Chemical mapping of a 177-nucleotide RNA with 2A3 and DMS. The RNA was probed in 150 mM KOAc, 10 mM MgCl2 and 150 mM bicine (pH 8.5) at 24 C. Values cover nucleotides 27 to 126. For DMS the reverse transcriptase was MarathonRT.
RNA sequence: GGGAACGACUCGAGUAGAGUCGAAAAGCCACUGCCUUCGGGCAGUGGCAAAACAAAGCGAUUUCUGACCGCUUUUUAGUCAGAAAAAGAUCGAAAGAUCAAAAACGUCAGACUUCGGUCUGACGAAGGUAUAUAUAUAGUUCGCUAUAUAUAUACCAAAAGAAACAACAACAACAAC
Reactivity to 2A3 in 0.01 (KOAc 150mM, MgCl2 10mM, bicine 150mM(pH8.5), 24C), signal-to-noise 2, nucleotides 027 to 126: g010c010c010a010c010u000g000c010c010u030u070c220g040g010g010c000a010g010u020g000g020c010a000a000a010a010c030a030a090a000g010c000g020a020u020u050u000c000u000g010a010c000c000g030c050u140u030u010u010u070a010g000u030c000a000g080a020a000a000a010a000g010a000u010c040g040a100a050a030g010a010u020c050a000a010a020a080a020c000g000u000c000a000g010a000c000u050u100c300g090g000u000c000u000g010a000c000g000a030a010
Reactivity to DMS in 0.01 (KOAc 150mM, MgCl2 10mM, bicine 150mM(pH8.5), 24C), signal-to-noise 2, nucleotides 027 to 126: g020c000c000a030c000u020g000c000c000u010u010c200g040g030g050c010a000g090u010g010g030c010a010a020a080a100c090a070a150a040g010c010g000a150u000u000u000c010u010g020a000c000c000g000c020u000u020u000u000u000a120g010u000c000a000g010a000a020a140a110a150g010a010u000c010g010a150a060a150g010a010u000c010a080a060a070a070a170c020g000u000c000a000g000a000c000u000u020c210g000g000u000c000u010g000a000c000g010a010a020